RNA sequence: GGGAACGACUCGAGUAGAGUCGAAAAGCGGUGAGCCUGCCUAAUGCGUCCGCCCAACUGGUUCGGGCGUCGGGUGUGUUGCCGGCGGACGGCACUCGACGCGCCGUCCUGUACCUGCACGGCGGCGGCACAUCAGAGUCUUCGGACUCUGAUGUGCAAAAGAAACAACAACAACAAC
Reactivity to DMS in 0.01 (KOAc 150mM, MgCl2 10mM, bicine 150mM(pH8.5), 24C), signal-to-noise 1, nucleotides 027 to 126: g000c020g000g000u010g000a140g010c030c010u000g000c020c000u000a130a080u010g000c000g010u010c010c010g000c090c010c100a150a110c060u000g010g010u000u000c030g020g000g000c020g040u000c020g010g010g040u020g020u000g000u000u000g040c030c020g020g000c140g030g010a090c010g010g010c000a010c020u010c040g010a020c070g010c020g020c000c000g010u000c000c010u000g000u000a080c050c040u000g020c060a110c180g000g000c010g000g000c060g020
Reactivity to 2A3 in 0.01 (KOAc 150mM, MgCl2 10mM, bicine 150mM(pH8.5), 24C), signal-to-noise 1, nucleotides 027 to 126: g030c030g000g120u150g090a000g040c030c010u100g030c000c020u180a220a070u120g070c010g010u040c000c030g020c000c020c020a070a130c060u040g040g060u170u060c010g000g000g010c010g010u000c000g030g090g020u040g000u030g060u080u090g110c000c010g000g050c060g070g080a060c020g020g000c000a000c010u040c000g050a030c030g040c070g050c030c000g020u010c000c000u000g010u000a080c010c060u060g000c080a040c080g070g070c020g010g020c000g040
Notes
An RNA of 177 nucleotides, treated with DMS and 2A3 and read out base by base. Reactivities are given for positions 27 through 126. It was measured as part of the RMDB library OK2TRN. Conditions: 150 mM KOAc, 10 mM MgCl2 and 150 mM bicine (pH 8.5), 24 C. Values are in units of 0.01, from 0 to 300, in steps of 10. 2A3 adducts were read by reverse transcription with SuperScript II with manganese.